The record gives the reactivity of an RNA of 177 nucleotides to DMS and 2A3. For DMS the reverse transcriptase was MarathonRT. For DMS, 15,529 sequencing reads were counted.

[RMDB]
RNA sequence: GGGAACGACUCGAGUAGAGUCGAAAAGCAAGAUGCUUCGGCAUCUUGCAGUCGUAGCGCGAUCGACAGAAUUUCAGCUAUGUCGAACGAGGAAGAGCGCGCACAUCAUCCCUUUCGAGGGAUGAAAUUGGAAUAAGCUAUUCGUAGCUUAUUCCAAAAAAGAAACAACAACAACAAC
Reactivity to DMS in 0.01 (KOAc 150mM, MgCl2 10mM, bicine 150mM(pH8.5), 24C), signal-to-noise 9, nucleotides 027 to 126: g010c000a000a000g000a010u000g010c000u000u010c200g040g000c000a000u000c000u000u010g010c000a040g010u010c040g010u000a060g020c010g010c010g000a120u000c000g000a030c000a010g000a120a170u000u010u000c250a120g010c110u000a100u000g010u000c010g010a020a080c070g000a150g000g010a090a040g000a110g010c000g010c000g020c020a080c210a160u000c000a000u000c000c000c000u000u000u010c140g010a030g010g010g000a010u000g000a000a060a100
Reactivity to 2A3 in 0.01 (KOAc 150mM, MgCl2 10mM, bicine 150mM(pH8.5), 24C), signal-to-noise 4, nucleotides 027 to 126: g010c000a000a000g010a010u010g000c000u070u120c250g120g010c000a000u000c000u000u000g000c000a000g010u020c030g000u020a040g000c010g000c010g000a050u010c010g010a000c010a010g110a110a090u110u250u250c080a100g040c060u100a050u100g010u020c000g020a030a040c050g010a070g130g150a080a040g020a020g100c010g020c000g020c010a010c010a060u020c000a000u010c000c000c000u010u040u040c180g080a000g000g000g000a000u010g000a020a020a010